[RMDB]
RNA sequence: GGGAACGACUCGAGUAGAGUCGAAAAGAUUGGAGUGAUCGCCAGGUCGCGGGGGAACGACACCGCGACGACCCGCUCGCGGCUGGCCGGAAUGUUGACCAGCAUGACGGUGUCCGAACGUGCGCCGGCCAUUGGAAAGGUUCGCCUUUCCAAUGGCAAAAGAAACAACAACAACAAC
Reactivity to 2A3 in 0.01 (KOAc 150mM, MgCl2 10mM, bicine 150mM(pH8.5), 24C), signal-to-noise 2, nucleotides 027 to 126: g010a040u140u300g020g000a050g090u100g070a090u020c030g010c050c030a050g000g110u050c000g040c020g070g000g020g030g030a030a130c080g080a020c030a010c010c000g000c000g020a010c010g010a010c000c000c060g050c000u060c040g010c000g080g000c020u010g060g000c000c000g130g060a130a040u140g050u180u090g120a100c030c010a020g030c010a030u080g020a020c050g010g020u030g030u000c000c000g050a100a030c060g050u050g050c050g000c010c020g050
Reactivity to DMS in 0.01 (KOAc 150mM, MgCl2 10mM, bicine 150mM(pH8.5), 24C), signal-to-noise 2, nucleotides 027 to 126: g020a120u010u000g000g010a100g010u010g000a070u010c060g000c060c030a050g000g020u000c020g020c030g010g000g000g010g000a100a160c120g020a140c080a070c000c010g000c000g020a050c040g000a070c080c030c030g010c100u000c030g000c100g000g000c060u030g000g030c010c000g010g000a090a070u020g010u010u010g010a040c080c110a110g000c010a070u000g030a150c020g000g000u000g000u000c050c050g000a070a110c160g010u000g010c040g000c050c070g010
Overview
The data come from the RNA Mapping Database (RMDB), library OK2TRN. This 177-nucleotide RNA was probed chemically with 2A3 and DMS. The DMS profile rests on 1,626 reads. Conditions: 150 mM KOAc, 10 mM MgCl2 and 150 mM bicine (pH 8.5), 24 C.